[RMDB]
RNA sequence: GGGAACGACUCGAGUAGAGUCGAAAACAUGGAGUGCUCGGGCCUCGGAGCCUCCUACAACAACAACAACUUACGAGGCCGUUAAUGGGCGAAAGCCCUAGGAGUCGUGGCGGCGUGCACGCUCCGUAUGACUUAAUGUAUUACACGCCGGAUACAACGAUGCCUAAAUAUUCGUAUUUAGGCAUCGAAAAGAAACAACAACAACAAC
Reactivity to 2A3 in 0.01 (KOAc 150mM, MgCl2 10mM, bicine 150mM(pH8.5), 24C), signal-to-noise 3, nucleotides 027 to 156: c050a040u110g010g000a010g010u160g000c000u000c040g010g040g010c000c000u000c000g010g000a000g000c000c000u000c020c000u060a070c070a170a000c000a040a010c000a000a020c020a050a010c020u150u260a010c020g000a000g010g000c000c000g000u000u020a030a020u030g000g000g000c010g050a050a030a000g000c000c010c000u010a030g000g000a010g010u290c020g000u030g000g020c000g000g000c000g000u010g000c000a000c020g000c000u000c000c010g000u030a130u140g080a020c030u040u170a090a020u150g060u150a130u070u140a020c000a010c000g000c000c000g000g030a120u190a050c060a100a020
Reactivity to DMS in 0.01 (KOAc 150mM, MgCl2 10mM, bicine 150mM(pH8.5), 24C), signal-to-noise 2, nucleotides 027 to 156: c060a120u010g000g010a080g000u000g040c000u000c030g030g000g020c010c000u000c010g050g020a020g010c000c000u010c010c020u000a070c080a070a100c090a120a090c090a100a120c080a110a120c090u010u000a210c020g010a060g020g020c000c000g050u000u000a060a080u000g010g040g000c000g010a120a140a240g030c000c000c000u010a010g000g010a080g000u020c020g040u000g020g030c020g000g000c010g070u000g000c010a060c060g030c020u000c020c020g050u000a000u000g010a110c120u000u010a090a130u020g040u000a080u000u000a120c030a040c030g010c000c010g030g000a090u000a040c050a080a240
The data come from the RNA Mapping Database (RMDB), library OK3TST. This 207-nucleotide RNA was probed chemically with 2A3 and DMS. 2A3 adducts were read by reverse transcription with SuperScript II with manganese. DMS adducts were read by reverse transcription with MarathonRT. The RNA was probed in 150 mM KOAc, 10 mM MgCl2 and 150 mM bicine (pH 8.5) at 24 C.